Source information:
Chemical mapping of a 177-nucleotide RNA with 2A3. Reactivities are given for positions 27 through 126. It was measured as part of the RMDB library OK1LIB. The RNA was probed in 150 mM KOAc, 10 mM MgCl2 and 150 mM bicine (pH 8.5) at 24 C. Reactivities are rounded to 0.1 and cut off at 0 and 3. 2A3 is a SHAPE reagent: it acylates the 2'-hydroxyl of flexible nucleotides of all four kinds. For 2A3 the reverse transcriptase was SuperScript II with manganese.

RNA sequence: GGGAACGACUCGAGUAGAGUCGAAAAUACAUCUAUAACGAAAUGUUACGUCAAAAUUUAGAUAAAAAGUAUGAUAUUCACACUGUUUUUAAAGCGAAUAUUACAGAUAGACGUGGCAUCAUCGACACUGACCACUAUGCUUCGGCAUAGUGGUCAGAAAAGAAACAACAACAACAAC
Reactivity to 2A3 in 0.01 (KOAc 150mM, MgCl2 10mM, bicine 150mM(pH8.5), 24C), signal-to-noise 2, nucleotides 027 to 126: u130a000c020a120u130c090u140a170u060a300a010c000g000a010a010a010u020g000u000u000a000c000g000u030c050a130a170a000a000u120u300u140a220g040a000u140a190a130a000a000a000g000u030a040u070g000a000u000a000u000u150c000a000c020a000c040u180g300u050u080u050u000u160a210a080a000g010c030g020a020a000u040a000u110u000a150c090a000g080a100u270a000g000a000c000g000u000g000g000c000a030u060c080a080u100c000g090a080c080a090